Structure probing data (2A3) for a 207-nucleotide construct.
RNA sequence: GGGAACGACUCGAGUAGAGUCGAAAACGCUAGCGCAGACUGGGACCGUUGUUCGUGGCACCCAGCUCUGUGUCGACUCACACGGAAUCGUCGGGUCUUAUGUGUUUGGAUAAGACUUGACUAAACUUAACAAACUCGCUUAAUGUGAUCCCUGCUGCGUUCGCAUAGUGUUCGCACUAUGCGAACGAAAAGAAACAACAACAACAAC
Reactivity to 2A3 in 0.01 (KOAc 150mM, MgCl2 10mM, bicine 150mM(pH8.5), 24C), signal-to-noise 2, nucleotides 027 to 156: c070g040c110u110a090g070c020g000c030a000g010a030c000u020g000g000g010a050c080c050g030u020u060g080u130u100c060g010u090g050g000c050a170c010c000c000a010g010c080u010c010u000g010u000g040u010c050g030a030c010u000c020a060c000a000c020g000g010a010a050u050c010g000u000c030g000g010g020u000c000u000u010a030u050g170u030g060u080u100u260g110g000a000u000a000a000g000a000c000u000u030g020a000c000u010a020a050a000c030u060u240a140a000c040a110a150a020c050u030c050g080c020u130u300a100a060u300g010u030g030a060u040c000c000c000u030g040c040u060g010

About this RNA: The reactions ran in a buffer of 150 mM KOAc, 10 mM MgCl2 and 150 mM bicine (pH 8.5), at 24 C.